[RMDB]
Source: RMDB library OK1LIB, as collected in RNAgym. Chemical mapping of a 177-nucleotide RNA with 2A3 and DMS. Reactivities are rounded to 0.1 and cut off at 0 and 3. The reactions ran in a buffer of 150 mM KOAc, 10 mM MgCl2 and 150 mM bicine (pH 8.5), at 24 C.
RNA sequence: GGGAACGACUCGAGUAGAGUCGAAAAGGUGCGAAUCACUGUUUGGUCUAAUCCUAGACAUUCUGUGUUCUAUGAGGCAUUCUCAUAAAGCGAAGCCGCGCUACGAUCAGGUACGUUGCGCCUGUUAAGUGUCUGUUCCAUUCGUGGAGCAGGCGCUAAAAGAAACAACAACAACAAC
Reactivity to 2A3 in 0.01 (KOAc 150mM, MgCl2 10mM, bicine 150mM(pH8.5), 24C), signal-to-noise 9, nucleotides 027 to 126: g040g000u030g010c010g030a030a030u110c010a010c020u030g050u040u030u060g100g010u000c010u030a050a060u050c020c050u020a010g010a010c010a020u080u020c040u090g060u010g030u080u040c050u040a060u090g030a040g050g050c130a180u290u030c020u000c010a030u080a050a080a010g040c020g020a040a010g020c010c010g010c000g000c010u060a040c030g060a070u090c010a010g010g010u020a010c050g000u010u010g020c020g000c000c000u010g030u050u080a070
Reactivity to DMS in 0.01 (KOAc 150mM, MgCl2 10mM, bicine 150mM(pH8.5), 24C), signal-to-noise 9, nucleotides 027 to 126: g000g010u000g010c030g000a080a060u030c030a060c040u000g000u010u000u010g010g010u010c020u010a070a110u030c110c100u000a040g010a040c040a050u000u010c050u010g010u010g010u010u010c050u000a040u010g010a050g000g020c190a100u020u020c010u000c020a060u010a030a070a090g000c060g000a090a080g000c040c020g010c040g000c050u010a070c150g000a080u040c030a030g000g010u000a000c100g010u000u000g000c060g000c030c010u000g000u010u010a060